The record gives the reactivity of an RNA of 177 nucleotides to 2A3 and DMS. It was measured as part of the RMDB library VIROID. The RNA was probed in 150 mM KOAc, 10 mM MgCl2 and 150 mM bicine (pH 8.5) at 24 C. 2A3 adducts were read by reverse transcription with SuperScript II with manganese. The 2A3 profile rests on 1,782 reads.
RNA sequence: GGGAACGACUCGAGUAGAGUCGAAAAGGGUCGACAACUCUGGGGAGAAAAGGGCGGAUCGGAUGGGAAGAGUAUAUCCUAUGGAAAUCCCUGGUUUCCCCUGAUGUCCAGCCCCUCCCCGGUCCGAUCUACAGUCAAUGUUCGCAUUGACUGUAGAAAAAGAAACAACAACAACAAC
Reactivity to 2A3 in 0.01 (KOAc 150mM, MgCl2 10mM, bicine 150mM(pH8.5), 24C), signal-to-noise 2, nucleotides 027 to 126: g030g020g000u040c010g070a070c040a170a030c050u010c060u120g000g010g000g040a030g100a010a130a030a030g000g010g000c020g040g000a090u130c030g030g020a010u060g050g010g030a040a040g020a080g270u050a040u020a030u130c020c060u130a170u160g050g000a040a110a120u070c040c010c000u010g000g100u020u040u010c020c020c000c000u020g000a010u040g000u000c010c020a050g030c000c010c000c000u000c000c000c000c000g030g000u040c000c000g010a050
Reactivity to DMS in 0.01 (KOAc 150mM, MgCl2 10mM, bicine 150mM(pH8.5), 24C), signal-to-noise 2, nucleotides 027 to 126: g030g030g010u000c070g020a060c120a040a090c080u000c020u020g020g000g010g000a050g000a030a050a100a150g010g020g020c030g000g000a060u010c040g000g000a140u000g000g000g020a080a090g010a130g000u000a060u010a070u010c010c020u000a050u000g010g020a040a130a090u010c030c050c020u010g020g000u000u000u000c050c010c020c080u030g000a160u010g030u010c010c020a110g020c000c000c000c010u010c010c000c000c020g040g010u010c010c030g000a160